[RMDB]
RNA sequence: GGGAACGACUCGAGUAGAGUCGAAAAGGACAGGGAGGAUCCAUGAGGUACCGGAUCCAGUAGGUACCAAGCUAGAUAUAUAUACGCUCGCUAGAAUAGAGCGUUACCGGAAACGGGACCUGUCCGACAUUAUGAGGAGGUUCGCCUCCUCAUAAUGAAAAGAAACAACAACAACAAC
Reactivity to DMS in 0.01 (KOAc 150mM, MgCl2 10mM, bicine 150mM(pH8.5), 24C), signal-to-noise 9, nucleotides 027 to 126: g010g010a020c000a020g010g010g010a130g010g010a030u000c010c020a220u010g000a280g010g010u000a010c010c010g010g020a260u010c130c160a080g010u000a120g000g000u000a010c010c010a050a110g010c130u000a050g000a030u000a040u010a130u010a090u000a030c000g010c000u000c000g010c220u010a120g010a120a150u010a100g000a000g010c000g010u000u000a030c010c010g000g000a060a090a160c010g010g000g010a080c000c010u000g010u000c000c010g010a160
Reactivity to 2A3 in 0.01 (KOAc 150mM, MgCl2 10mM, bicine 150mM(pH8.5), 24C), signal-to-noise 4, nucleotides 027 to 126: g010g000a000c010a000g010g020g030a100g090g030a020u020c010c020a240u080g040a030g020g000u010a010c010c020g020g080a070u100c060c000a020g060u080a010g000g000u010a010c000c000a000a000g030c020u050a020g020a060u030a010u010a010u010a010u010a130c000g010c010u010c010g040c070u080a080g120a300a220u120a100g000a040g010c000g000u000u020a020c000c000g030g000a060a040a030c010g010g000g030a020c000c000u000g000u000c000c000g010a000
Overview:
The record gives the reactivity of an RNA of 177 nucleotides to DMS and 2A3. For 2A3 the reverse transcriptase was SuperScript II with manganese. The 2A3 profile rests on 13,449 reads. The DMS profile rests on 13,459 reads. Values cover nucleotides 27 to 126.